[RMDB]
RNA sequence: GGGAACGACUCGAGUAGAGUCGAAAAAGAGGUUCCAUCCAAGUCGACGGUGAGGAGCUGGUCAGCGGCCGGUCCCCAGGUCCCAACGUGGCAGUCAACGCCAAGGGCAGCGUCUACAUCGGUAAGUCUGGGGCUCCUUCUCAGGGCAGGGGCAGGAGCCCCGAUUACUAUUCGUAGUAAUCGGGGCAAAAGAAACAACAACAACAAC
Reactivity to 2A3 in 0.01 (KOAc 150mM, MgCl2 10mM, bicine 150mM(pH8.5), 24C), signal-to-noise 1, nucleotides 027 to 156: a000g060a030g020g010u090u020c000c000a010u030c070c010a110a030g070u080c030g070a080c040g080g020u100g030a020g060g000a010g040c060u050g000g120u050c040a030g020c070g000g000c020c010g060g000u010c020c030c000c010a050g050g040u050c010c000c000a120a060c100g030u060g060g010c050a070g060u140c130a060a060c100g010c020c100a090a130g070g000g000c010a050g060c030g030u010c010u080a110c030a140u090c020g000g030u100a080a000g050u040c000u000g000g000g020g020c000u050c010c020u060u050c000u000c030a040g050g000g010c030a010g000g000g030g000c030a020g050g040a000